[RMDB]
RNA sequence: GGGAACGACUCGAGUAGAGUCGAAAAACCUACCAAGGAGGACCGGAGGCGAAAGCGAUUACCAAGAACUGAUCUGACGAUCAAGCACGUGAGCAGGAGUAUCGAAGAGGAUUAGAGACCCACGUAGGGGGUGUUUACCAUUCGUGGUAAACACCCCAAAAGAAACAACAACAACAAC
Reactivity to 2A3 in 0.01 (KOAc 150mM, MgCl2 10mM, bicine 150mM(pH8.5), 24C), signal-to-noise 2, nucleotides 027 to 126: a000c020c000u020a050c000c000a020a010g040g000a000g010g000a110c010c080g090g000a030g010g000c030g090a130a000a000g060c040g060a030u090u080a060c060c000a000a010g030a060a050c030u070g030a010u030c030u050g000a050c070g010a010u060c010a000a000g000c000a050c140g100u050g050a070g000c030a050g000g060a050g060u000a000u160c030g030a070a030g040a010g080g000a000u000u060a000g030a050g030a020c000c000c070a050c050g020u120a140g000
Reactivity to DMS in 0.01 (KOAc 150mM, MgCl2 10mM, bicine 150mM(pH8.5), 24C), signal-to-noise 2, nucleotides 027 to 126: a050c010c030u000a080c090c140a040a100g000g000a060g030g000a050c030c040g010g000a020g000g000c090g000a040a170a140g010c000g030a090u000u000a090c120c120a080a100g000a050a090c110u010g030a020u030c000u000g000a100c130g020a030u000c070a070a090g040c050a000c160g050u070g000a040g030c080a040g000g000a040g030u040a000u000c070g000a060a040g030a200g010g010a110u010u030a020g020a080g030a130c000c000c010a060c230g010u030a140g000